[RMDB]
The data come from the RNA Mapping Database (RMDB), library OK2TST. Chemical mapping of a 177-nucleotide RNA with 2A3 and DMS. DMS adducts were read by reverse transcription with MarathonRT. The RNA was probed in 150 mM KOAc, 10 mM MgCl2 and 150 mM bicine (pH 8.5) at 24 C. Reactivities are given for positions 27 through 126.
RNA sequence: GGGAACGACUCGAGUAGAGUCGAAAACUGUCCAAUGCCACGAUAGACAUGAAGAUCUUCCGCGAGGAGACUUUUGGCCCCGCCAUGCCACUUUUCCGAUUCCACAAUGAUGAGGAGGCGAUCCAGCACAACGUGUGUAAUUCGUUACACACGUUGUAAAAGAAACAACAACAACAAC
Reactivity to 2A3 in 0.01 (KOAc 150mM, MgCl2 10mM, bicine 150mM(pH8.5), 24C), signal-to-noise 5, nucleotides 027 to 126: c010u030g040u030c020c030a050a080u110g010c030c010a050c050g050a080u060a080g040a030c030a050u120g060a040a030g040a210u010c020u080u000c050c010g110c060g060a100g040g020a030g020a040c000u050u110u080u080g050g010c000c020c010c010g000c020c000a040u080g010c010c010a060c030u080u090u060u000c010c010g030a050u070u000c020c010a060c050a170a150u220g050a020u060g010a060g060g000a020g000g000c010g010a030u000c020c020a030g020c060
Reactivity to DMS in 0.01 (KOAc 150mM, MgCl2 10mM, bicine 150mM(pH8.5), 24C), signal-to-noise 6, nucleotides 027 to 126: c080u000g000u000c030c060a090a080u010g020c030c020a060c080g010a140u000a070g020a080c060a060u010g010a060a040g010a130u000c030u000u000c030c010g010c240g010a170g010g000a070g010a050c040u000u000u000u000g010g010c030c030c020c050g000c070c050a070u000g010c020c030a070c070u000u000u000u000c030c030g000a160u010u000c020c040a050c130a090a090u000g000a090u010g020a200g010g000a060g000g010c040g010a060u000c040c040a120g000c170